[RMDB]
RNA sequence: GGGAACGACUCGAGUAGAGUCGAAAAGUACAGGCCAGACUAUUAUUGUCUGGUAUAGUGCAACAGCAGAACAAUUUGCUGAGGGCUAUUGAGGCGCAACAGCAUCUGUUGCAACUCACAGUCUGGGCGUACAAACUCCGUUCGCGGAGUUUGUACGAAAAGAAACAACAACAACAAC
Reactivity to 2A3 in 0.01 (KOAc 150mM, MgCl2 10mM, bicine 150mM(pH8.5), 24C), signal-to-noise 2, nucleotides 027 to 126: g020u020a000c040a050g200g000c000c010a000g020a000c010u030a070u300u130a110u290u240g000u000c010u000g000g000u030a000u010a000g030u000g040c030a090a090c000a040g060c000a000g080a150a080c040a150a250u120u030u030g000c000u040g070a110g000g070g000c000u020a040u090u130g010a020g030g000c030g000c030a000a030c000a020g100c030a160u120c120u120g000u000u000g000c000a000a050c000u000c020a000c000a010g010u030c000u050g010g050g000
Reactivity to DMS in 0.01 (KOAc 150mM, MgCl2 10mM, bicine 150mM(pH8.5), 24C), signal-to-noise 4, nucleotides 027 to 126: g010u000a080c010a140g000g000c000c000a000g010a010c000u000a150u040u030a100u030u010g000u000c000u000g000g000u000a000u040a050g010u020g020c000a160a170c030a010g020c000a020g010a070a090c300a090a130u010u010u010g000c030u000g040a180g020g000g000c010u000a130u030u010g010a010g020g020c300g000c000a040a000c010a020g010c300a150u030c040u000g010u000u000g020c010a020a300c010u000c020a040c200a020g000u000c010u000g020g000g000